RNA sequence: GGGAACGACUCGAGUAGAGUCGAAAAACGAGUCCGUACGCGGACUCUAAGGGCCCCAGAAGACCAAGGGGCCCAAACCUACCACUCAUUAGAUGCAUGGAAAUCACUAGGUGAUACGUCACCUAGAACACGCUUUUAAGCUUCGGCUUAAAAGCAACUAAGAGGUGAACUUCGGUUCACCUCUUAGAAAAGAAACAACAACAACAAC
Reactivity to 2A3 in 0.01 (KOAc 150mM, MgCl2 10mM, bicine 150mM(pH8.5), 24C), signal-to-noise 1, nucleotides 027 to 156: a000c020g000a000g000u000c000c010g030u000a000c200g020c000g080g000a000c010u030c000u000a000a010g000g030g000c040c000c000c000a110g150a300a070g090a140c030c110a150a050g000g000g000g000c000c000c000a000a000a120c000c000u030a040c040c020a040c050u160c070a110u070u180a020g030a120u050g180c200a000u080g080g160a050a060a080u280c050a030c090u000a000g020g000u000g000a000u020a160c190g000u010c000a000c020c010u000a000g010a000a010c040a030c020g010c000u000u080u000u040a000a000g000c000u040u070c230g040g000c000u010u010a000a000a000a000g000c000a000a000
The record gives the reactivity of an RNA of 207 nucleotides to 2A3. 2A3 adducts were read by reverse transcription with SuperScript II with manganese. Reactivities are given for positions 27 through 156.